[RMDB]
RNA sequence: GGGAACGACUCGAGUAGAGUCGAAAAUUUUUCGUCUACCGCCAUAUCGAAUAUUCAAGCGAUCUCUGGUGGGAUUUCGCGUGGAACGGCAACGCCCCGCGUUUCCUGCGCGCCACCGUUCUGGUUACCGUCAUUUAAAUUUCGAUUUAAAUGACGGAAAAGAAACAACAACAACAAC
Reactivity to 2A3 in 0.01 (KOAc 150mM, MgCl2 10mM, bicine 150mM(pH8.5), 24C), signal-to-noise 6, nucleotides 027 to 126: u040u030u000u030u050c020g020u010c040u070a080c020c000g000c000c000a040u050a010u150c020g040a100a050u140a170u240u230c090a120a040g050c000g010a020u000c070u000c020u090g010g000u040g030g000g020a010u090u170u120c040g010c020g040u070g000g040a080a060c020g030g000c050a060a040c050g060c030c020c010c000g020c000g010u010u050u020c010c020u030g010c010g000c000g000c010c010a030c030c010g020u050u010c020u040g040g020u090u120a070
Reactivity to DMS in 0.01 (KOAc 150mM, MgCl2 10mM, bicine 150mM(pH8.5), 24C), signal-to-noise 7, nucleotides 027 to 126: u010u000u010u010u010c080g020u010c070u000a150c030c030g010c020c010a020u010a030u000c010g020a120a100u000a140u000u000c230a110a130g000c020g010a020u000c040u000c030u000g010g030u010g010g000g000a080u000u010u010c050g010c020g020u000g020g000a050a050c040g000g010c100a090a090c110g000c040c060c080c050g010c020g000u000u000u000c030c020u000g020c040g010c060g000c070c060a050c040c020g010u000u000c020u000g000g000u000u010a140

This 177-nucleotide RNA was probed chemically with 2A3 and DMS.
The 2A3 profile rests on 10,208 reads.
Reactivities are given for positions 27 through 126.